[RMDB]
RNA sequence: GGGAACGACUCGAGUAGAGUCGAAAAACUCAAGGAACAGACGGGAUAAUCGUAUUGAUAUCAAUCCUCGUAGGAUUCUCACGUACGGGUUCUUAGAGGUCUGCCCACAGAUAGAAAUCCUACUGUGAAAUGCAUGGUUAUUCGUAACCAUGCAUUUAAAAGAAACAACAACAACAAC
Reactivity to 2A3 in 0.01 (KOAc 150mM, MgCl2 10mM, bicine 150mM(pH8.5), 24C), signal-to-noise 9, nucleotides 027 to 126: a000c010u010c020a030a030g040g000a030a020c020a010g030a020c010g010g040g000a020u020a030a050u050c120g080u100a090u070u300g040a050u060a040u200c120a130a050u080c020c030u040c040g030u050a020g000g080a000u020u010c020u010c040a020c020g050u260a090c040g140g180g010u020u010c000u010u030a030g000a010g020g030u030c050u090g070c000c010c000a010c000a010g060a060u050a010g060a020a100a060u080c010c010u000a010c000u030g010u030g060
Reactivity to DMS in 0.01 (KOAc 150mM, MgCl2 10mM, bicine 150mM(pH8.5), 24C), signal-to-noise 7, nucleotides 027 to 126: a050c020u010c010a070a120g000g010a010a020c020a130g000a040c020g000g000g010a020u000a020a010u000c000g010u000a010u010u040g030a020u040a170u020c220a100a100u050c150c140u000c070g000u010a030g000g010a010u000u000c050u000c020a030c020g010u000a070c080g020g010g000u000u010c010u000u010a230g010a030g010g000u020c050u000g010c000c000c010a050c040a020g000a080u010a020g000a140a150a090u020c130c000u000a000c010u000g020u000g000

An RNA of 177 nucleotides, treated with 2A3 and DMS and read out base by base. For 2A3, 15,562 sequencing reads were counted. For DMS, 20,461 sequencing reads were counted. The data come from the RNA Mapping Database (RMDB), library OK1LIB. Conditions: 150 mM KOAc, 10 mM MgCl2 and 150 mM bicine (pH 8.5), 24 C.